[RMDB]
RNA sequence: GGGAACGACUCGAGUAGAGUCGAAAAUGUUGGUUCGCCAACACGUAGAGCGUACUACGUACUUUUGACGGAGAUAUUCUACCCACCGCUUCCCAAAUAGGAAGCGAGGAAUAAUUCCGAUAAGUACGUAUCGCAAUGUAUGGAUUUCGAUCCAUAACAUGUCUGGCAUCUUCGGAUGCCAGACAUGAAAAGAAACAACAACAACAAC
Reactivity to 2A3 in 0.01 (KOAc 150mM, MgCl2 10mM, bicine 150mM(pH8.5), 24C), signal-to-noise 1, nucleotides 027 to 156: u100g000u000u000g000g130u040u000c290g030c040c000a000a000c020a000c000g160u170a080g040a060g100c000g020u040a200c160u000a000c080g080u000a070c040u100u060u030u070g140a230c050g000g000a110g010a050u070a030u100u010c000u050a080c060c020c010a080c010c020g000c000u050u000c030c160c000a230a300a140u120a050g030g000a000a000g020c010g000a020g000g000a000a000u020a020a040u160u030c030c000g040a020u000a000a000g010u000a000c120g000u000a020u300c020g000c040a020a040u050g030u030a000u010g030g000a010u000u100u240c300g100a000u000c000c000a000u000a010a010